About this RNA:
Chemical mapping of a 207-nucleotide RNA with 2A3. The 2A3 profile rests on 864 reads.
RNA sequence: GGGAACGACUCGAGUAGAGUCGAAAAACUGCCAUACGUGGCAGAAACACGCCUUACCAGGACUAAACAGCGUGUCUAAAAAAUAGUCCUUCAUACCUGAUCUGGAGGGUAGAUCAGGAAUACUAAAAAAAUCGGGUGAAGUUCGCUUCACCCGAAACACACCGAUUUUCUUCGGAAAAUCGGUGUGAAAAGAAACAACAACAACAAC
Reactivity to 2A3 in 0.01 (KOAc 150mM, MgCl2 10mM, bicine 150mM(pH8.5), 24C), signal-to-noise 1, nucleotides 027 to 156: a010c010u000g000c000c000a030u000a030c120g100u040g010g000c010a010g000a010a010a000c000a000c000g000c000c000u040u090a010c040c050a000g000g000a010c000u060a150a000a000c010a000g000c000g000u010g020u060c150u030a020a000a000a000a000a000u050a000g000u000c020c000u000u090c040a040u030a110c000c010u000g000a000u040c010u050g100g050a080g150g000g010u040a010g010a000u000c020a000g030g000a000a010u180a060c080u100a010a000a000a040a000a060a150u030c010g010g020g000u000g000a000a000g020u020u110c160g030c160u000u000c000a000c000c000c000g000a000a000a000